[RMDB]
RNA sequence: GGGAACGACUCGAGUAGAGUCGAAAACGAUCUGCAACGCGUGCAGGCCGACUUCGCCAACUACCGUAAGCGGGCGUUGCGCGAUCAGCAGGCGGCCGCUGACCGAGCCAAGGCCAGCGUUGUCAGCCGCGGCGAUCGCAUUCGUGCGAUCGCCGCGAAAAGAAACAACAACAACAAC
Reactivity to 2A3 in 0.01 (KOAc 150mM, MgCl2 10mM, bicine 150mM(pH8.5), 24C), signal-to-noise 1, nucleotides 027 to 126: c020g020a000u020c000u090g000c000a030a040c000g050c050g100u230g030c280a300g020g020c000c000g130a080c010u160u220c050g050c090c080a100a080c020u060a130c020c020g190u170a300a000g050c030g010g110g000c030g020u000u120g070c190g000c000g020a050u020c070a000g080c040a000g060g000c000g140g000c000c000g000c000u000g000a130c020c020g080a080g000c090c130a090a000g000g050c000c000a000g000c020g000u000u030g030u020c000a000g000c000

Structure probing data (2A3) for a 177-nucleotide construct. Conditions: 150 mM KOAc, 10 mM MgCl2 and 150 mM bicine (pH 8.5), 24 C. The 2A3 profile rests on 342 reads. For 2A3 the reverse transcriptase was SuperScript II with manganese.